[RMDB]
RNA sequence: GGGAACGACUCGAGUAGAGUCGAAAAGCUCGCCUCAUUCGCAUGGGGCCUGCUCUAAGGUGGGCCAGCUAAAAGCGACAUUGCAAAUGUGGAAUGUGAGAGUGGUAGGGUUAAAACCUGACUCUGUUACAAUGAAUGCUUUCGAGCAUUCAUUGUAAAAAGAAACAACAACAACAAC
Reactivity to DMS in 0.01 (KOAc 150mM, MgCl2 10mM, bicine 150mM(pH8.5), 24C), signal-to-noise 4, nucleotides 027 to 126: g000c010u010c080g000c010c000u000c000a010u000u000c050g010c060a020u010g000g010g000g020c000c030u000g000c000u000c220u080a120a110g010g030u000g000g000g010c010c020a160g020c030u010a070a060a100a150g000c030g010a120c050a010u010u000g040c020a050a020a030u010g000u000g000g000a080a030u000g000u000g000a060g010a060g010u000g010g000u010a070g000g000g000u000u030a070a100a120a160c010c010u020g000a050c060u000c010u000g020u010
Reactivity to 2A3 in 0.01 (KOAc 150mM, MgCl2 10mM, bicine 150mM(pH8.5), 24C), signal-to-noise 5, nucleotides 027 to 126: g020c010u010c020g040c030c010u010c010a010u030u010c020g000c020a000u030g050g050g030g000c000c000u000g000c000u010c070u200a170a090g090g010u030g000g010g000c000c020a020g020c050u110a060a070a070a030g020c020g070a070c030a070u160u280g000c030a050a050a030u030g000u050g050g050a070a070u110g040u090g050a080g000a010g000u060g040g090u070a080g040g000g020u030u070a060a120a010a040c000c000u000g030a030c020u000c020u050g030u040